An RNA of 207 nucleotides, treated with 2A3 and read out base by base. It was measured as part of the RMDB library OK3TST.
[RMDB]
RNA sequence: GGGAACGACUCGAGUAGAGUCGAAAAGUGUCUACUUGCUCCCGAGAAGAGGAGCGCUCAUGUCUUUUUUGCACCCCAAGUUGGCUGGAGCAUCGGCCACCCCAAGAUUCAUCUGUGACCUCCAGGCAGCAGUCUCUGCUCCAGAAUCUCUGGACGGGACAACAAGAAUCUUCGGAUUCUUGUUGUCAAAAGAAACAACAACAACAAC
Reactivity to 2A3 in 0.01 (KOAc 150mM, MgCl2 10mM, bicine 150mM(pH8.5), 24C), signal-to-noise 1, nucleotides 027 to 156: g040u050g050u000c060u050a060c060u080u140g030c010u010c040c030c020g040a050g070a100a080g080a150g040g020a040g020c010g000c100u150c110a080u100g060u090c020u030u110u030u050u110u130g040c040a050c040c000c000c000a060a070g020u070u070g070g000c000u020g000g000a040g040c020a080u100c070g030g000c000c020a060c000c000c000c000a010a040g050a030u100u100c030a040u060c070u090g080u050g100a090c010c000u010c010c040a020g030g000c010a000g060c020a020g060u000c010u000c010u090g020c040u000c000c000a010g030a140a160u050c070u020c000u130g020g000a030c070g040g000
The reactions ran in a buffer of 150 mM KOAc, 10 mM MgCl2 and 150 mM bicine (pH 8.5), at 24 C. 2A3 adducts were read by reverse transcription with SuperScript II with manganese. The 2A3 profile rests on 644 reads.